[RMDB]
RNA sequence: GGGAACGACUCGAGUAGAGUCGAAAAGAUAUGGAACGAAUCUCUGAACUACUCCGAACGGUCGGAAACGACCGGGAGGAGCAGAGACUAUUCCUAAGUCAAAGACAUGUACUUCGGUACAUGUCAAGACAUAGCACGAGUUCGCUCGUGCUAUGUCAAAAGAAACAACAACAACAAC
Reactivity to 2A3 in 0.01 (KOAc 150mM, MgCl2 10mM, bicine 150mM(pH8.5), 24C), signal-to-noise 2, nucleotides 027 to 126: g010a040u120a040u160g040g000a020a030c040g090a220a300u000c000u000c010u000g030a080a070c100u240a070c010u160c000c010g020a060a020c000g020g000u000c010g000g050a100a070a090c010g000a000c000c000g020g000g000a000g000g000a010g000c020a000g000a010g010a000c000u040a050u020u040c010c000u020a160a000g040u030c080a140a050a070g000a010c000a010u000g010u010a000c000u040u110c300g180g000u010a010c010a010u000g000u000c000a000a010
Reactivity to DMS in 0.01 (KOAc 150mM, MgCl2 10mM, bicine 150mM(pH8.5), 24C), signal-to-noise 2, nucleotides 027 to 126: g010a060u000a300u030g000g010a060a030c150g000a060a150u020c000u000c010u000g000a070a050c130u000a300c010u010c060c000g000a300a260c030g000g010u000c000g010g020a120a060a140c010g010a030c000c010g010g000g000a300g000g030a000g000c030a000g000a010g020a010c010u000a200u000u000c000c000u010a050a110g000u000c040a050a060a060g000a010c000a000u000g010u000a000c000u010u000c180g090g000u000a000c000a000u000g000u000c000a000a020
An RNA of 177 nucleotides, treated with 2A3 and DMS and read out base by base.
Values are in units of 0.01, from 0 to 300, in steps of 10.
For 2A3, 2,522 sequencing reads were counted.
High 2A3 reactivity points to a flexible backbone, as in loops and unpaired stretches.
Values cover nucleotides 27 to 126.